Notes
Structure probing data (2A3 and DMS) for a 177-nucleotide construct. Source: RMDB library TTRDES, as collected in RNAgym. Values cover nucleotides 27 to 126. 2A3 adducts were read by reverse transcription with SuperScript II with manganese. The RNA was probed in 150 mM KOAc, 10 mM MgCl2 and 150 mM bicine (pH 8.5) at 24 C.
[RMDB]
RNA sequence: GGGAACGACUCGAGUAGAGUCGAAAAGAUAUGGAGAUGAGAAUGACAACAGCCAUUUAUUCGGAAACGAAUAAUGGACAUGUCACUCAUCUCCUAAGUCAAAGUGAAUGUCUUCGGACAUUCACAAGUGCAUAAUCAACUUCGGUUGAUUAUGCACAAAAGAAACAACAACAACAAC
Reactivity to 2A3 in 0.01 (KOAc 150mM, MgCl2 10mM, bicine 150mM(pH8.5), 24C), signal-to-noise 5, nucleotides 027 to 126: g010a000u000a010u050g010g010a010g000a010u030g010a010g090a300a300u190g010a020c070a250a040c080a300g000c010c000a020u060u200u210a020u020u050c010g030g000a020a000a000c000g000a000a000u010a000a000u000g030g000a020c040a120u300g000u000c000a000c000u000c000a000u010c010u000c000c000u000a010a000g000u000c020a080a070a060g000u000g000a000a010u000g000u000c020u030u100c300g180g000a010c010a000u010u000c000a000c000a000a030
Reactivity to DMS in 0.01 (KOAc 150mM, MgCl2 10mM, bicine 150mM(pH8.5), 24C), signal-to-noise 2, nucleotides 027 to 126: g010a000u000a030u010g000g020a010g020a000u000g010a000g000a210a130u000g000a010c020a100a070c250a160g010c000c010a000u020u010u000a010u000u000c000g010g000a010a000a030c010g000a010a010u000a000a000u000g000g000a000c050a300u020g040u010c010a060c000u010c000a000u000c020u000c000c000u000a000a070g000u000c000a110a160a250g000u010g000a010a000u000g010u010c000u000u010c250g040g010a010c000a010u000u000c000a000c010a050a040